[RMDB]
RNA sequence: GGGAACGACUCGAGUAGAGUCGAAAACUUCGGUAGUUCGCUACCGAAGAAAAGACAGACUACGCAAGUGUCAAAAACACAACAAAAGUGUAAAAGCGUAGAAAAGUUCCCACUUCGGUGGGAACAAGUCUUACUGAAUCUUCGGAUUCAGUAAGACAAAAGAAACAACAACAACAAC
Reactivity to DMS in 0.01 (KOAc 150mM, MgCl2 10mM, bicine 150mM(pH8.5), 24C), signal-to-noise 2, nucleotides 027 to 126: c000u000u000c000g000g010u020a020g030u000u000c170g080c000u000a000c000c020g000a000a000g010a010a030a070a090g010a140c100a120g000a230c030u010a000c000g000c020a100a070g030u000g010u030c150a050a120a090a090a060c030a020c000a070a160c180a060a100a090a110g030u010g010u030a030a020a100a150g000c000g000u020a000g000a060a040a170a120g000u030u000c010c010c000a010c030u000u000c150g050g000u000g000g000g020a000a000c000a050a050
Reactivity to 2A3 in 0.01 (KOAc 150mM, MgCl2 10mM, bicine 150mM(pH8.5), 24C), signal-to-noise 3, nucleotides 027 to 126: c000u000u000c000g010g000u010a010g020u040u050c220g000c080u010a000c000c010g000a010a000g000a000a020a010a000g010a000c030a020g050a090c000u010a000c010g000c010a070a170g060u010g000u090c030a040a030a000a040a020c040a030c030a180a060c050a050a170a060a070g030u030g020u060a080a070a020a010g020c000g000u000a000g000a010a070a000a000g000u000u000c000c020c000a010c010u030u020c190g100g010u000g010g010g030a000a000c000a010a010
The record gives the reactivity of an RNA of 177 nucleotides to DMS and 2A3. 2A3 is a SHAPE reagent: it acylates the 2'-hydroxyl of flexible nucleotides of all four kinds. It was measured as part of the RMDB library M2PK50.